Chemical mapping of a 177-nucleotide RNA with DMS. DMS adducts were read by reverse transcription with MarathonRT. The data come from the RNA Mapping Database (RMDB), library OK2TST. For DMS, 572 sequencing reads were counted. The reactions ran in a buffer of 150 mM KOAc, 10 mM MgCl2 and 150 mM bicine (pH 8.5), at 24 C.

[RMDB]
RNA sequence: GGGAACGACUCGAGUAGAGUCGAAAACAGCACGGCCAGAGUGCACACUGCGAUCCUAGUACGAUCCUAUACGGCCUCACAGGUACGGCGCACGAUCGAGACACGUGCGCCUAGCGCCGCACUGAGAUGAAAAACGUACCUUCGGGUACGUUUUUCAAAAAGAAACAACAACAACAAC
Reactivity to DMS in 0.01 (KOAc 150mM, MgCl2 10mM, bicine 150mM(pH8.5), 24C), signal-to-noise 1, nucleotides 027 to 126: c110a110g020c110a160c040g010g050c180c020a150g000a070g020u000g010c030a110c070a100c110u000g020c090g030a010u000c000c040u000a140g020u000a150c160g000a020u020c000c000u000a000u020a110c160g040g000c020c030u120c020a120c160a070g040g030u020a070c140g000g000c010g010c000a000c050g000a000u000c090g000a210g000a150c260a070c000g000u000g000c000g000c000c000u000a020g020c120g010c070c000g030c140a070c040u000g010a040g040a080